[RMDB]
RNA sequence: GGGAACGACUCGAGUAGAGUCGAAAAAGGCCUAUGAGUCCCCCCACCCUAGAAACAAGAGAGAGCCUGUCUCACUCACCCUGGCUGUCCUUCUCGGAUUAGGGGUCGCAGCAGGUAUAGGUACCGGUCGUACGUUAUUCUUCGGAAUAACGUACGAAAAAGAAACAACAACAACAAC
Reactivity to DMS in 0.01 (KOAc 150mM, MgCl2 10mM, bicine 150mM(pH8.5), 24C), signal-to-noise 1, nucleotides 027 to 126: a190g010g020c020c030u010a080u000g030a110g040u010c010c030c000c010c010c040a110c020c020c030u020a060g000a130a120a060c140a100a070g020a030g010a100g000a060g010c020c100u020g020u030c020u000c070a120c070u000c010a130c090c020c020u010g020g000c070u010g000u000c010c080u000u010c100u010c100g000g010a100u000u040a070g000g010g020g000u000c160g020c070a050g010c000a050g000g000u020a060u000a030g000g000u000a140c040c080g000g010

An RNA of 177 nucleotides, treated with DMS and read out base by base. DMS adducts were read by reverse transcription with MarathonRT. Source: RMDB library OK2TST, as collected in RNAgym. The reactions ran in a buffer of 150 mM KOAc, 10 mM MgCl2 and 150 mM bicine (pH 8.5), at 24 C. The DMS profile rests on 895 reads.